[RMDB]
RNA sequence: GGGAACGACUCGAGUAGAGUCGAAAAGACGCCUGUGUGGCGAAGCGAGCAUGGGAAAGAGCCGCACAGUCCAUCUCAUAUAAAGCGGCAAGAUGGAUUGCUCGCUAAAAGAUCCAUAUCACUGAGAACUCGCUGACGAGUUCGCUCGUCAGCGAGUAAAAGAAACAACAACAACAAC
Reactivity to 2A3 in 0.01 (KOAc 150mM, MgCl2 10mM, bicine 150mM(pH8.5), 24C), signal-to-noise 1, nucleotides 027 to 126: g120a000c130g040c030c010u000g120u060g060u050g050g040c140g000a000a000g110c000g000a070g070c000a110u190g060g000g120a000a140a000g130a130g000c010c000g000c000a050c000a000g020u000c000c000a090u000c050u030c020a000u070a000u020a270a080a000g050c050g120g040c210a030a070g000a010u040g030g000a000u000u000g000c000u000c000g000c000u000a000a000a000a000g100a050u100c020c020a000u000a000u270c090a050c030u000g100a060g060a140
This 177-nucleotide RNA was probed chemically with 2A3. The reactions ran in a buffer of 150 mM KOAc, 10 mM MgCl2 and 150 mM bicine (pH 8.5), at 24 C.